The record gives the reactivity of an RNA of 177 nucleotides to DMS and 2A3. The reactions ran in a buffer of 150 mM KOAc, 10 mM MgCl2 and 150 mM bicine (pH 8.5), at 24 C. 2A3 adducts were read by reverse transcription with SuperScript II with manganese. Reactivities are given for positions 27 through 126.

RNA sequence: GGGAACGACUCGAGUAGAGUCGAAAAGAAAUUACCCACAUGGAGACAGCAGAAAAUGAGAAAGGAGAGAUCGUGCUGCGAAUAAUUCCAGCGAGUGCCAAGGGGCUAGUUGAGGAAUGGCUUCAUGCAAUGAAAGGCAGUUCGCUGCCUUUCAUUGAAAAGAAACAACAACAACAAC
Reactivity to DMS in 0.01 (KOAc 150mM, MgCl2 10mM, bicine 150mM(pH8.5), 24C), signal-to-noise 2, nucleotides 027 to 126: g010a100a070a160u010u020a110c010c000c000a260c140a080u020g000g020a040g020a100c080a060g000c030a030g000a060a060a090a100u020g000a040g000a050a030a080g000g010a070g020a050g020a040u010c040g000u000g000c040u000g000c110g000a050a180u000a050a090u000u000c020c010a010g000c050g000a100g010u000g010c030c080a090a140g000g000g020g020c040u000a040g030u000u000g010a090g000g000a080a020u000g000g010c050u000u000c060a050u010g020
Reactivity to 2A3 in 0.01 (KOAc 150mM, MgCl2 10mM, bicine 150mM(pH8.5), 24C), signal-to-noise 2, nucleotides 027 to 126: g070a000a130a010u140u080a100c020c000c000a030c000a030u030g000g000a010g040a040c030a000g030c000a020g090a050a170a030a090u160g010a060g060a140a040a040g050g040a060g030a000g020a020u050c040g030u060g010c060u020g000c000g000a040a040u200a190a070u130u000c030c010a010g010c010g070a020g050u090g090c010c060a100a070g080g050g000g040c020u040a020g070u030u060g070a010g010g020a040a040u050g010g040c000u030u020c010a020u090g040